This 177-nucleotide RNA was probed chemically with DMS and 2A3. The RNA was probed in 150 mM KOAc, 10 mM MgCl2 and 150 mM bicine (pH 8.5) at 24 C. The DMS profile rests on 1,959 reads. 2A3 is a SHAPE reagent: it acylates the 2'-hydroxyl of flexible nucleotides of all four kinds. For DMS the reverse transcriptase was MarathonRT. It was measured as part of the RMDB library OK2TRN.
RNA sequence: GGGAACGACUCGAGUAGAGUCGAAAAAUGGCGCAAGCAUUUCCUACUGGUGUAGGAAGCAUGGCUGCAGUAUUGGGAUUAGAUUUUGAUAAAGUCGAUGAAAUUUGUAAGUCAUUAUCAUCUGAUGCCGUGUGUCUAAGUUCGCUUAGACACACGGAAAAGAAACAACAACAACAAC
Reactivity to DMS in 0.01 (KOAc 150mM, MgCl2 10mM, bicine 150mM(pH8.5), 24C), signal-to-noise 2, nucleotides 027 to 126: a040u000g000g010c070g000c060a060a090g000c010a140u000u000u000c000c010u000a010c010u000g050g040u010g020u000a000g000g010a040a050g000c240a040u000g010g010c020u000g010c030a100g030u010a070u000u020g010g040g010a090u000u000a100g010a040u000u010u010u010g000a070u010a080a040a130g000u010c040g010a070u020g010a080a050a130u010u020u000g000u000a090a190g000u010c020a050u010u000a050u000c050a090u000c020u010g020a080u010g010
Reactivity to 2A3 in 0.01 (KOAc 150mM, MgCl2 10mM, bicine 150mM(pH8.5), 24C), signal-to-noise 2, nucleotides 027 to 126: a010u030g060g000c010g010c070a000a040g030c010a000u030u010u010c060c000u000a010c030u200g270g040u300g000u030a000g010g000a010a010g020c020a060u070g110g000c000u010g000c030a010g040u080a080u050u110g050g020g000a000u000u040a080g030a060u080u110u080u080g050a070u130a080a090a040g010u030c060g030a080u060g100a080a080a130u070u130u060g070u140a090a110g000u020c000a000u010u020a060u080c010a010u020c030u050g020a040u090g060